About this RNA:
Structure probing data (DMS and 2A3) for a 177-nucleotide construct. 2A3 adducts were read by reverse transcription with SuperScript II with manganese. The RNA was probed in 150 mM KOAc, 10 mM MgCl2 and 150 mM bicine (pH 8.5) at 24 C. It was measured as part of the RMDB library M2PK90.
RNA sequence: GGGAACGACUCGAGUAGAGUCGAAAAUAAAAGAUGAAUAAAUCAGCAUGGUGAUCAUGCAGUUAAACGGAGGAUCACGAAAAGAUUAAGUGAUCCACCGAAAUACAAGAUCACGAAAUAAAAAAAACAAUAUCAGAGGAUUCGUCCUCUGAUAUUGAAAAGAAACAACAACAACAAC
Reactivity to DMS in 0.01 (KOAc 150mM, MgCl2 10mM, bicine 150mM(pH8.5), 24C), signal-to-noise 2, nucleotides 027 to 126: u000a110a110a110a070g010a040u000g000a140a090u010a060a120a060u010c060a090g000c070a040u000g020g010u000g000a040u030c000a060u000g000c010a080g010u000u030a030a050a150c040g010g000a090g020g040a010u000c000a000c010g000a100a110a160a230g010a120u000u000a070a210g000u000g000a000u000c000c010a020c000c000g010a000a040a050u000a040c010a040a050g010a010u000c000a020c010g010a040a070a050u050a030a040a010a040a050a040a070a140
Reactivity to 2A3 in 0.01 (KOAc 150mM, MgCl2 10mM, bicine 150mM(pH8.5), 24C), signal-to-noise 2, nucleotides 027 to 126: u210a010a090a010a070g060a020u040g010a170a250u160a190a170a030u060c020a000g090c000a000u050g130g000u010g010a000u000c020a000u040g000c030a010g010u030u080a040a140a020c000g010g000a010g000g000a010u010c010a010c030g010a030a120a010a080g160a030u140u130a120a040g000u000g010a010u000c000c000a000c000c010g010a070a000a020u090a010c040a040a040g000a010u010c000a020c010g030a000a070a020u210a050a100a000a020a030a000a000a000